[RMDB]
RNA sequence: GGGAACGACUCGAGUAGAGUCGAAAAUCGUCUCCGGGGUCACGUGUCUGGUCCUCCCCAAGUACCAGGCCGACCUGUAUACCUAUCUGAGUAGGCGCCUGAACCCGCUGGGACGCCCGCAGAUCGCAUUCGUAUCUCGUUUCGACGAGAUACGAAUAAAAGAAACAACAACAACAAC
Reactivity to 2A3 in 0.01 (KOAc 150mM, MgCl2 10mM, bicine 150mM(pH8.5), 24C), signal-to-noise 4, nucleotides 027 to 126: u100c010g030u010c000u020c010c010g010g020g000g000u060c030a020c080g200u220g010u090c000u010g000g000u010c010c020u090c020c040c020c000a020a030g010u000a020c000c010a010g010g000c010c000g050a040c000c010u010g080u040a150u100a060c000c010u070a070u130c060u110g030a040g120u070a060g060g020c010g010c000c000u030g040a090a080c020c000c020g060c060u030g000g000g040a030c000g010c000c020c000g040c030a080g020a170u160c100g010c080
Reactivity to DMS in 0.01 (KOAc 150mM, MgCl2 10mM, bicine 150mM(pH8.5), 24C), signal-to-noise 2, nucleotides 027 to 126: u050c060g070u000c000u030c020c020g000g000g000g000u010c020a130c140g000u020g010u020c000u000g000g010u000c050c030u030c030c030c010c030a080a140g000u010a020c030c010a010g020g010c000c060g000a070c050c020u020g000u020a090u090a090c060c020u000a040u000c110u030g000a240g000u000a030g020g000c070g000c130c040u000g030a080a060c020c000c010g020c130u000g030g000g000a000c020g010c080c000c020g040c120a060g000a090u020c080g000c180
An RNA of 177 nucleotides, treated with 2A3 and DMS and read out base by base. Reactivities are given for positions 27 through 126. It was measured as part of the RMDB library OK1LIB. For DMS the reverse transcriptase was MarathonRT. The DMS profile rests on 3,703 reads.